[RMDB]
Structure probing data (2A3) for a 177-nucleotide construct. Source: RMDB library OK1LIB, as collected in RNAgym. 2A3 adducts were read by reverse transcription with SuperScript II with manganese. The reactions ran in a buffer of 150 mM KOAc, 10 mM MgCl2 and 150 mM bicine (pH 8.5), at 24 C.
RNA sequence: GGGAACGACUCGAGUAGAGUCGAAAAUAGACGAGAGAUAUAGCAAUCGUCAUACCCAUAUCACUCUAUGUGACGAUUGGUGAACGCUAUCAUAGAGUGAGUGGGUAGCGUUCACACACAUUCUCGAGAUUGUAAGGUGAUUCGUCACUUUGCAAUCAAAAGAAACAACAACAACAAC
Reactivity to 2A3 in 0.01 (KOAc 150mM, MgCl2 10mM, bicine 150mM(pH8.5), 24C), signal-to-noise 5, nucleotides 027 to 126: u160a000g060a020c040g010a010g000a000g020a050u050a020u100a280g130c060a020a030u010c000g020u000c010a010u050a040c010c010c010a010u060a070u060c020a020c020u040c020u050a040u100g030u030g010a040c030g070a110u000u250g000g000u100g080a040a010c000g000c000u000a000u000c000a060u090a050g130a000g020u170g030a030g040u090g050g010g010u000a000g010c020g000u020u040c020a020c000a000c000a000c000a030u040u010c010u000c000g030a030